Conditions: 150 mM KOAc, 10 mM MgCl2 and 150 mM bicine (pH 8.5), 24 C. This 177-nucleotide RNA was probed chemically with DMS and 2A3.
RNA sequence: GGGAACGACUCGAGUAGAGUCGAAAACUGGGCGAUAGAACGCAAGCCUUCGACAUCAAGCCUGGCGUAAAUCAUCGUCGUCGCGCGGGAACGGUGGCGUAGCGUGUCGCUGAUUUCUUCCAGAGAAGGAUAGCCGUACUUUCGAGUACGGCUAUCCAAAAGAAACAACAACAACAAC
Reactivity to DMS in 0.01 (KOAc 150mM, MgCl2 10mM, bicine 150mM(pH8.5), 24C), signal-to-noise 2, nucleotides 027 to 126: c080u000g000g000g020c000g000a040u040a110g000a020a020c010g020c000a090a300g000c040c030u000u000c000g000a090c150a010u000c070a040a110g000c030c020u000g020g060c000g020u060a020a070a050u030c210a020u030c170g040u000c030g000u000c140g020c220g000c100g000g000g000a000a120c020g010g040u010g010g000c000g000u030a130g010c040g010u000g020u000c000g050c030u000g000a120u040u000u010c010u020u030c050c120a080g000a190g010a060a190
Reactivity to 2A3 in 0.01 (KOAc 150mM, MgCl2 10mM, bicine 150mM(pH8.5), 24C), signal-to-noise 3, nucleotides 027 to 126: c040u070g000g030g000c000g000a020u000a110g190a110a050c030g010c030a020a040g020c020c000u000u060c020g040a060c030a190u050c020a030a080g060c000c020u040g050g010c000g000u080a120a190a090u270c100a060u170c030g120u070c010g060u100c010g000c030g020c020g040g010g000a070a070c020g000g000u000g020g000c040g040u060a030g000c040g030u060g010u020c010g000c040u000g010a080u030u040u030c000u060u030c040c030a030g030a000g030a300a050
Record summary: The 2A3 profile rests on 2,106 reads.